[RMDB]
Chemical mapping of a 177-nucleotide RNA with DMS and 2A3. High DMS reactivity at an A or C suggests that its Watson-Crick edge is free. Conditions: 150 mM KOAc, 10 mM MgCl2 and 150 mM bicine (pH 8.5), 24 C. The 2A3 profile rests on 1,345 reads. 2A3 adducts were read by reverse transcription with SuperScript II with manganese.
RNA sequence: GGGAACGACUCGAGUAGAGUCGAAAAACAACACGCUUCGGCGUGUUGUCGACGGAGGAAGCUGAGGUCGCGCUUGUGCCGCAGCAGGGAAGCGCAGCGUAAAUCAGAGGUGAUUCGUCACCUCUAAUGCUAAGGUCACAUUCGUGUGACCUUAGCAAAAAGAAACAACAACAACAAC
Reactivity to DMS in 0.01 (KOAc 150mM, MgCl2 10mM, bicine 150mM(pH8.5), 24C), signal-to-noise 2, nucleotides 027 to 126: a040c010a010a000c010a000c010g010c000u000u030c220g040g000c000g070u000g020u010u000g010u000c040g000a120c120g040g020a120g010g000a130a090g020c030u000g030a100g000g010u000c100g030c040g020c090u000u010g030u000g010c040c060g000c110a070g010c010a130g000g010g010a170a080g000c030g020c030a040g000c070g000u000a060a140a050u020c110a010g000a020g030g020u000g000a030u000u020c140g060u000c000a030c000c010u010c010u010a050a090
Reactivity to 2A3 in 0.01 (KOAc 150mM, MgCl2 10mM, bicine 150mM(pH8.5), 24C), signal-to-noise 1, nucleotides 027 to 126: a000c000a010a020c000a010c000g020c000u060u030c260g210g000c020g000u000g020u000u000g010u000c010g020a060c010g000g020a040g080g050a050a060g050c040u050g010a000g030g060u080c040g000c030g000c050u120u160g050u040g050c030c040g020c040a070g030c030a030g080g020g000a090a020g000c070g000c000a030g030c050g030u090a060a050a120u110c060a010g000a020g050g040u040g000a010u010u080c150g000u020c050a000c000c010u000c000u000a010a030